[RMDB]
This 207-nucleotide RNA was probed chemically with 2A3 and DMS. The DMS profile rests on 4,902 reads. The 2A3 profile rests on 4,760 reads. The reactions ran in a buffer of 150 mM KOAc, 10 mM MgCl2 and 150 mM bicine (pH 8.5), at 24 C. For DMS the reverse transcriptase was MarathonRT.
RNA sequence: GGGAACGACUCGAGUAGAGUCGAAAAAGGAAGAAAAUGAAAACAGUGCAAAUCAACAAGUUAACAAUAAUCAGCAUGCUCGAAAUAACAACGCUAUUCCUGUGGUGGGAGAAGGCCUUCAUGCAGCCCACCAAGCCAUACUCCAGCAGGGAGGGCACAGGGUAAAUAAUUUCGAUUAUUUACCCUGAAAAGAAACAACAACAACAAC
Reactivity to 2A3 in 0.01 (KOAc 150mM, MgCl2 10mM, bicine 150mM(pH8.5), 24C), signal-to-noise 5, nucleotides 027 to 156: a000g070g010a060a030g050a060a080a020a060u150g040a050a050a070a070c050a030g030u050g070c030a020a030a170u100c000a040a110c020a080a060g070u140u150a050a010c030a060a060u130a070a050u080c020a010g030c020a020u040g010c020u060c080g060a060a070a120u150a070a030c080a050a020c050g010c020u050a050u040u060c000c000u040g010u030g060g060u040g010g020g010a090g010a050a040g070g010c010c020u110u110c050a060u130g050c020a040g040c000c000c010a000c000c000a000a000g000c000c010a040u060a140c020u030c010c000a020g060c010a020g030g040g040a020g000g020g000c030a000
Reactivity to DMS in 0.01 (KOAc 150mM, MgCl2 10mM, bicine 150mM(pH8.5), 24C), signal-to-noise 2, nucleotides 027 to 156: a060g000g000a090a070g010a060a050a080a140u010g010a100a110a070a080c020a040g030u000g030c010a050a040a120u010c040a060a080c060a060a120g020u000u000a100a110c050a090a080u000a080a110u010c050a130g020c020a030u000g020c000u000c050g000a060a080a100u000a080a100c080a040a030c020g030c020u000a110u000u000c010c020u000g000u000g010g040u000g010g020g010a110g010a100a100g010g020c040c020u000u000c050a070u000g020c030a170g000c040c010c000a030c010c020a010a080g050c020c020a060u010a100c020u000c000c010a160g000c070a070g020g000g010a040g020g040g010c050a180